[RMDB]
RNA sequence: GGGAACGACUCGAGUAGAGUCGAAAAUGAGGUCAUAUAGCUCAGAGGUGGCAAUGCUUGGAUUUCAGACCUUUGGACUUCGUAUCCAGUUCUCACUUCUCUCUAUCCUAGCACCUCCAUUAAAGCAGUGGCUCUCAGCUACUAGGGGCAGUUUUCCGCUAGAUAGUAAGUUCGCUUACUAUCUAGCAAAAGAAACAACAACAACAAC
Reactivity to DMS in 0.01 (KOAc 150mM, MgCl2 10mM, bicine 150mM(pH8.5), 24C), signal-to-noise 2, nucleotides 027 to 156: u000g030a060g030g010u010c000a100u010a080u000a110g040c020u000c060a140g010a140g000g000u000g040g040c120a070a060u000g020c030u000u010g020g010a080u000u010u000c040a060g040a060c050c040u000u000u010g020g010a040c020u010u010c120g010u000a110u010c060c020a070g010u010u000c030u010c080a170c100u000u010c040u000c020u010c030u000a060u000c020c010u010a050g000c000a100c020c000u010c040c010a140u000u000a060a050a060g000c040a200g020u000g020g020c010u000c080u000c060a100g020c020u000a030c020u000a050g000g020g040g050c060a150g040u000u010u000u000c000c060
Reactivity to 2A3 in 0.01 (KOAc 150mM, MgCl2 10mM, bicine 150mM(pH8.5), 24C), signal-to-noise 5, nucleotides 027 to 156: u060g000a000g020g010u020c000a020u230a030u060a240g010c020u030c090a040g030a050g150g000u020g030g020c090a110a040u020g010c010u030u030g030g020a030u030u150u130c060a050g010a100c030c000u080u070u100g010g000a010c030u120u030c250g060u160a120u040c030c010a030g030u130u030c050u040c050a090c050u200u140c040u020c000u000c020u090a030u050c010c010u010a010g010c010a020c000c010u010c000c010a080u120u160a090a080a010g010c020a000g010u020g020g020c040u040c000u010c130a020g000c020u010a030c010u040a050g010g000g020g020c050a040g030u010u020u040u060c000c000
Structure probing data (DMS and 2A3) for a 207-nucleotide construct. For DMS the reverse transcriptase was MarathonRT. The DMS profile rests on 5,247 reads.